[RMDB]
RNA sequence: GGGAACGACUCGAGUAGAGUCGAAAAGAAAUUACGUUUCCUUUACACUUCUCAAACCGGGAACAAGAGAAGCAAAGCAUCCCUCAUAUCCACGAUGGAGGGUGUCGUGGAGUAUACUGUACCAAAAAGAGCGAACACGGCUUCGGCCGUGUUCGAAGCACAGGAACUAGUUCGCUAGUUCCUGUGCAAAAGAAACAACAACAACAAC
Reactivity to 2A3 in 0.01 (KOAc 150mM, MgCl2 10mM, bicine 150mM(pH8.5), 24C), signal-to-noise 2, nucleotides 027 to 156: g010a000a040a010u260u140a040c090g010u020u040u030c010c000u060u030u100a040c060a020c000u060u020c010u020c040a130a200a150c070c060g040g060g040a060a010c060a150a010g010a010g000a010a000g000c050a020a030a070g030c010a040u030c000c030c000u060c010a030u050a010u120c010c020a010c090g020a020u020g040g070a100g040g000g060u010g000u020c000g000u010g000g010a020g050u010a020u010a040c050u050g090u100a090c030c030a050a050a040a010a000g120a040g100c000g000a000a000c000a020c000g020g030c030u050u070c230g040g000c000c000g000u000g000u000u000c000g000a000a000